[RMDB]
RNA sequence: GGGAACGACUCGAGUAGAGUCGAAAAGGGUUAUGUCACAAACGCUGAGGAGGCGAUCAAAUGCCCGAGCAAAAUACAAGCGGGUGUGACGUACAAAUUUAAGAUAAUGUUUGUCUCCUUGACACGACGGUCAAUGAAUGUUCGCAUUCAUUGACCGAAAAGAAACAACAACAACAAC
Reactivity to DMS in 0.01 (KOAc 150mM, MgCl2 10mM, bicine 150mM(pH8.5), 24C), signal-to-noise 2, nucleotides 027 to 126: g020g010g010u000u010a000u000g000u000c020a020c010a000a040a040c000g000c010u000g040a220g000g000a140g020g010c000g000a100u010c270a060a200a090u020g000c000c020c000g000a220g020c290a090a060a100a140u010a080c180a170a060g010c000g000g000g030u000g010u010g020a010c010g000u000a040c070a010a120a170u010u030u010a050a080g020a130u000a150a080u010g010u010u000u000g020u000c020u010c020c050u020u010g030a110c090a080c210g010a160
Reactivity to 2A3 in 0.01 (KOAc 150mM, MgCl2 10mM, bicine 150mM(pH8.5), 24C), signal-to-noise 2, nucleotides 027 to 126: g110g030g000u200u070a020u080g040u000c010a020c000a030a110a000c000g070c010u060g020a010g080g150a090g050g030c000g010a020u080c130a040a170a040u140g020c040c020c000g000a040g060c140a090a120a070a050u230a160c110a120a000g030c020g000g050g030u000g000u000g050a000c010g000u000a000c010a010a050a030u160u260u110a090a100g040a200u100a170a060u200g090u080u110u050g050u000c050u070c030c000u040u110g020a050c060a000c090g120a040